[RMDB]
RNA sequence: GGGAACGACUCGAGUAGAGUCGAAAAUAAGCUGACGCGCCCCUAUAUGGCCAGAUGCGUUAGGUGUGCCGUUGGGAGUUGCCAUAGCCCAAUAGCCAUAGAGGCGGUGAAGAGCGAUGGGCAUGACCAACAGUUGGACCUUCGGGUCCAACUGUUGAAAAGAAACAACAACAACAAC
Reactivity to DMS in 0.01 (KOAc 150mM, MgCl2 10mM, bicine 150mM(pH8.5), 24C), signal-to-noise 1, nucleotides 027 to 126: u030a130a150g000c020u010g050a090c120g010c070g020c010c010c050c000u000a150u000a040u000g000g020c030c120a120g010a140u010g010c140g000u020u010a040g010g010u000g030u010g020c020c000g000u000u010g000g000g040a140g010u000u030g010c070c040a130u010a200g000c000c010c040a070a040u000a050g000c010c010a040u000a120g000a130g000g020c070g000g000u000g010a070a090g010a190g070c100g000a170u000g000g000g000c030a010u000g000a140c190